[RMDB]
RNA sequence: GGGAACGACUCGAGUAGAGUCGAAAAACCCCUUCAGCGAACAGAAGACCCUGGUACCGGGGGGGAAUAGGCCAUAGUACGAGGGGAGAUGCUAGGAGUCGGGGGAAGCCAGAACGACUGGGAAAGGGAUAUGCUAAUGGUUCGCCAUUAGCAUAUCAAAAGAAACAACAACAACAAC
Reactivity to DMS in 0.01 (KOAc 150mM, MgCl2 10mM, bicine 150mM(pH8.5), 24C), signal-to-noise 1, nucleotides 027 to 126: a050c030c000c000c090u000u000c030a060g010c010g000a040a070c040a080g010a100a010g020a190c060c050c030u000g010g010u000a080c050c090g030g020g000g000g030g010g000a040a060u010a080g000g000c060c060a080u010a040g020u000a030c080g000a090g000g000g000g000a070g000a060u000g000c080u000a110g000g000a080g030u000c060g010g030g020g000g000a060a080g000c040c020a040g000a070a130c170g010a090c030u010g000g000g000a050a070a090g040g000
Reactivity to 2A3 in 0.01 (KOAc 150mM, MgCl2 10mM, bicine 150mM(pH8.5), 24C), signal-to-noise 1, nucleotides 027 to 126: a010c000c010c010c000u000u020c040a040g010c000g070a060a030c000a080g120a120a040g070a160c000c000c000u070g130g000u070a040c010c010g030g010g020g020g010g020g000a060a090u100a140g070g000c010c000a010u020a040g030u060a050c070g030a040g000g010g010g000a030g000a010u050g000c030u010a030g050g040a070g070u050c060g000g000g000g000g040a010a050g040c010c000a010g010a050a070c060g030a010c030u010g000g010g090a000a110a040g130g040